[RMDB]
RNA sequence: GGGAACGACUCGAGUAGAGUCGAAAACAGAGAACAUCAUAGAGCGGUGGGAUAGUGAUAAACGGUUAAACAGCUUAUACGCACAAAAAGACGCAGUAGAAAGCACGCUAGACACCUUAGAUGACGAUUUAACAGAUAUAUUCUGGCUGAGAUGGUCGUAGACUGACAGGUUCGCCUGUCAGUCUACAAAAGAAACAACAACAACAAC
Reactivity to 2A3 in 0.01 (KOAc 150mM, MgCl2 10mM, bicine 150mM(pH8.5), 24C), signal-to-noise 3, nucleotides 027 to 156: c030a010g090a010g060a090a030c020a040u110c020a020u120a080g160a000g020c060g010g000u040g020g110g070a050u070a070g040u030g020a030u110a070a140a030c050g000g020u020u160a030a190a010c010a030g000c010u020u090a050u020a090c050g020c090a040c040a050a050a030a050a010g070a040c080g010c070a040g000u060a000g050a030a040a000g000c020a020c070g000c020u010a020g050a000c010a020c000c000u000u000a050g020a140u090g040a040c070g030a030u000u000u110a080a030c050a030g030a000u050a010u050a060u200u030c000u000g050g000c020u010g020a040g010a150u060g030g080u050c060
Reactivity to DMS in 0.01 (KOAc 150mM, MgCl2 10mM, bicine 150mM(pH8.5), 24C), signal-to-noise 1, nucleotides 027 to 156: c040a130g000a120g050a040a020c040a070u000c020a140u000a110g000a180g030c140g040g060u040g020g000g020a100u000a020g050u010g000a140u010a040a020a060c030g010g030u020u010a060a090a060c040a170g020c000u000u000a050u000a120c040g000c000a110c030a080a060a060a100a230g040a070c040g040c000a110g030u000a080g000a050a090a070g010c020a040c070g000c030u000a070g020a100c030a090c020c050u000u000a110g000a130u000g010a050c080g050a140u000u000u000a100a120c020a030g000a120u030a080u000a140u000u020c040u000g000g000c040u000g010a130g000a040u000g000g020u000c040
Annotation:
Source: RMDB library OK3TST, as collected in RNAgym. The record gives the reactivity of an RNA of 207 nucleotides to 2A3 and DMS. For DMS, 1,429 sequencing reads were counted. 2A3 adducts were read by reverse transcription with SuperScript II with manganese. For DMS the reverse transcriptase was MarathonRT.